This 207-nucleotide RNA was probed chemically with 2A3 and DMS. DMS adducts were read by reverse transcription with MarathonRT. The data come from the RNA Mapping Database (RMDB), library M2RFPK. For DMS, 4,042 sequencing reads were counted. The RNA was probed in 150 mM KOAc, 10 mM MgCl2 and 150 mM bicine (pH 8.5) at 24 C. Reactivities are given for positions 27 through 156.
[RMDB]
RNA sequence: GGGAACGACUCGAGUAGAGUCGAAAACUGCAUCACCUGAUCACUGAUGGCUCAACGAUAUCCGGCGGUACAACUGAAUACUUGUAGCUGCCUUUUGAGCGGGUUGGCUGCAAUCCGAAACGGAGAGAAAACCUAAUUACGUUCGCGUAAUUAGGAACAAUAUGGCGAACUUCGGUUCGCCAUAUUGAAAAGAAACAACAACAACAAC
Reactivity to 2A3 in 0.01 (KOAc 150mM, MgCl2 10mM, bicine 150mM(pH8.5), 24C), signal-to-noise 4, nucleotides 027 to 156: c040u040g000c010a030u020c010a020c010c010u050g040a050u030c020a020c090u060g020a040u050g070g020c040u030c060a070a070c070g040a020u020a080u130c030c050g050g000c020g030g030u090a080c080a110a020c090u180g080a120a070u080a240c050u030u010g010u010a010g060c010u000g010c000c040u040u060u050u110g050a030g000c050g000g000g010u180u210g040g000c000u020g000c000a020a010u050c020c010g080a120a160a140c060g020g000a030g000a000g020a040a050a030a030c000c000u000a000a000u000u000a000c000g000u000u030c190g010c000g110u000a000a000u000u000a000g000g000a000a000
Reactivity to DMS in 0.01 (KOAc 150mM, MgCl2 10mM, bicine 150mM(pH8.5), 24C), signal-to-noise 2, nucleotides 027 to 156: c080u000g000c050a120u000c010a050c010c040u000g030a060u010c040a060c090u020g000a060u000g020g050c020u000c060a040a060c070g020a080u010a050u000c010c000g030g000c010g030g030u030a100c110a060a080c010u000g010a060a100u000a050c090u000u000g010u010a030g000c010u000g020c020c010u000u000u000u000g010a090g010c040g000g010g020u000u000g040g020c030u000g000c020a040a070u000c000c020g000a120a110a230c050g000g010a100g000a250g000a120a050a080a130c000c000u000a010a020u000u000a010c000g000u000u010c300g020c020g040u000a000a020u000u000a020g010g010a010a050